[RMDB]
RNA sequence: GGGAACGACUCGAGUAGAGUCGAAAAGUCAUCGUCGCCUUGUCCAUUUCAGCGCAGUCAAACUGGAACAAAAACGCGAAUGCGAAUAAAAGAAACAGAAAGUCGCACAACCAGACUCCCCGAGGCGCCAUCACGCUAAGUUCGCUUAGCGUGAUGGAAAAGAAACAACAACAACAAC
Reactivity to 2A3 in 0.01 (KOAc 150mM, MgCl2 10mM, bicine 150mM(pH8.5), 24C), signal-to-noise 5, nucleotides 027 to 126: g050u040c020a050u050c070g090u010c020g040c030c010u030u040g030u010c020c010a070u020u100u130c060a060g020c020g040c060a020g050u050c040a040a110a100c020u020g030g070a110a060c030a040a120a020a010a010c080g030c010g080a110a040u160g010c010g020a010a010u150a080a080a020a030g100a030a110a010c040a030g110a040a100a000g050u060c000g000c010a020c020a040a080c010c020a020g040a140c050u060c010c010c000c030g020a040g060g000c040g000
Reactivity to DMS in 0.01 (KOAc 150mM, MgCl2 10mM, bicine 150mM(pH8.5), 24C), signal-to-noise 3, nucleotides 027 to 126: g020u000c040a050u010c020g000u010c020g000c080c030u000u000g000u000c020c000a070u000u020u020c060a060g010c040g000c060a030g020u000c090a090a090a110c110u000g000g030a180a070c070a060a090a040a120a080c100g000c080g000a030a100u050g000c030g000a060a040u050a050a080a060a060g000a060a220a030c130a100g020a060a100a110g000u000c040g070c030a060c090a030a140c050c030a030g010a130c100u000c020c000c000c020g030a110g000g000c060g010
An RNA of 177 nucleotides, treated with 2A3 and DMS and read out base by base.
Reactivities are rounded to 0.1 and cut off at 0 and 3.
For 2A3, 3,541 sequencing reads were counted.
The RNA was probed in 150 mM KOAc, 10 mM MgCl2 and 150 mM bicine (pH 8.5) at 24 C.
2A3 adducts were read by reverse transcription with SuperScript II with manganese.
Values cover nucleotides 27 to 126.